This 177-nucleotide RNA was probed chemically with DMS and 2A3. The RNA was probed in 150 mM KOAc, 10 mM MgCl2 and 150 mM bicine (pH 8.5) at 24 C.
RNA sequence: GGGAACGACUCGAGUAGAGUCGAAAAAGAUUGUGCUUACAUUGGUCCUUAUGAAGAUAUGGCUUCAAGGCUAUCUGCAACUCAAACAGCAAUAAAACAUGGUUGCCCACCAAGUCUAGCAUGGGUAAUAAAAUCCAGGAUUCGUCCUGGAUUUUAUAAAAGAAACAACAACAACAAC
Reactivity to DMS in 0.01 (KOAc 150mM, MgCl2 10mM, bicine 150mM(pH8.5), 24C), signal-to-noise 3, nucleotides 027 to 126: a100g020a120u010u000g030u000g010c050u000u000a100c090a110u000u000g020g000u010c020c040u010u010a100u000g010a070a020g010a130u000a070u000g020g010c010u010u010c130a060a090g000g010c070u000a050u000c040u000g010c040a040a050c110u000c100a060a090a050c130a070g010c050a040a070u000a040a040a070a100c140a050u000g000g010u000u000g010c020c010c010a130c020c030a030a070g010u010c090u000a060g020c080a040u000g000g010g000u010a070
Reactivity to 2A3 in 0.01 (KOAc 150mM, MgCl2 10mM, bicine 150mM(pH8.5), 24C), signal-to-noise 1, nucleotides 027 to 126: a000g040a040u100u120g010u040g060c010u100u050a010c020a110u030u070g080g000u170c020c040u120u030a120u180g060a030a050g020a070u090a080u290g090g060c020u000u010c020a000a000g050g000c010u040a050u030c010u010g000c000a020a030c020u060c170a070a110a160c020a050g080c020a020a030u140a120a110a030a010c080a010u060g060g000u010u020g020c000c000c030a000c000c000a050a000g050u050c060u090a030g030c000a060u040g000g050g040u050a030

Record summary:
The DMS profile rests on 2,684 reads. DMS (dimethyl sulfate) methylates the pairing face of unpaired adenines and cytosines. Reactivities are given for positions 27 through 126.